[RMDB]
RNA sequence: GGGAACGACUCGAGUAGAGUCGAAAAGAUUCUAGGUUCGCCUAGAAUCAAAGAAACCGAAAGGAGGGGCGAGGUGCAGCCCCAAUAAAUCAAAUGCAGCAAAAAGAUCUACCUUCGGGUAGAUCAACUGAUAUAUCGUGUUCGCACGAUAUAUCAGAAAAGAAACAACAACAACAAC
Reactivity to DMS in 0.01 (KOAc 150mM, MgCl2 10mM, bicine 150mM(pH8.5), 24C), signal-to-noise 2, nucleotides 027 to 126: g000a010u000u000c000u020a010g000g010u000u000c260g000c030c000u010a000g000a000a010u000c010a000a110a120g010a130a140a190c010c020g010a070a110a090g000g000a100g020g000g010g010c010g000a070g010g000u000g010c020a120g000c000c020c000c000a020a030u000a030a120a100u000c070a010a010a020u000g000c030a020g000c030a060a060a120a070a200g000a010u000c000u000a020c010c000u000u010c200g020g000g000u000a010g020a000u000c000a010a070
Reactivity to 2A3 in 0.01 (KOAc 150mM, MgCl2 10mM, bicine 150mM(pH8.5), 24C), signal-to-noise 1, nucleotides 027 to 126: g020a000u000u000c000u000a010g030g000u060u020c050g060c020c000u000a000g010a000a000u010c000a000a000a000g010a080a050a020c030c030g050a060a060a010g090g100a080g000g010g030g000c030g010a060g000g080u020g000c020a010g000c000c020c000c010a000a000u030a010a000a000u100c040a000a000a050u070g020c020a040g020c060a080a000a040a040a040g000a000u010c000u000a000c010c010u040u110c280g130g000g010u010a000g010a000u010c000a000a000